Structure probing data (2A3 and DMS) for a 177-nucleotide construct.
The DMS profile rests on 1,718 reads.
The 2A3 profile rests on 2,045 reads.
The RNA was probed in 150 mM KOAc, 10 mM MgCl2 and 150 mM bicine (pH 8.5) at 24 C.

RNA sequence: GGGAACGACUCGAGUAGAGUCGAAAAAUAAAGCACGGCAAGCACAUCAAGCACAUGAAGCAGUACAAGCACAUGAAGCAGUACAAGCACUACAAGCAGUAGAAGCAGCCGAAGCACAUGAAAAAAACAUGAAAAUAAAGUUCGCUUUAUUUUCAUGAAAAGAAACAACAACAACAAC
Reactivity to 2A3 in 0.01 (KOAc 150mM, MgCl2 10mM, bicine 150mM(pH8.5), 24C), signal-to-noise 2, nucleotides 027 to 126: a000u190a020a050a030g020c020a010c070g000g000c030a030a030g010c020a050c000a060u050c030a040a070g010c000a010c000a090u100g050a070a000g010c030a010g020u100a040c070a130a040g000c040a020c000a080u080g090a110a030g000c030a000g010u060a020c010a100a060g050c010a020c040u090a020c000a110a030g100c030a000g030u100a010g020a070a030g000c000a000g010c020c020g020a050a000g010c020a010c000a050u170g130a030a080a000a000a040a020a040
Reactivity to DMS in 0.01 (KOAc 150mM, MgCl2 10mM, bicine 150mM(pH8.5), 24C), signal-to-noise 3, nucleotides 027 to 126: a040u010a060a070a060g020c040a080c100g020g000c050a060a060g010c070a030c060a060u000c080a030a090g030c020a060c100a050u000g010a050a100g010c010a060g020u000a050c120a080a050g030c040a090c090a060u000g000a040a040g000c010a100g000u000a030c100a030a100g000c050a060c060u010a020c090a050a060g010c110a070g040u000a040g010a050a060g010c040a050g000c010c020g030a050a050g010c040a050c060a080u000g000a000a020a030a010a090a050a170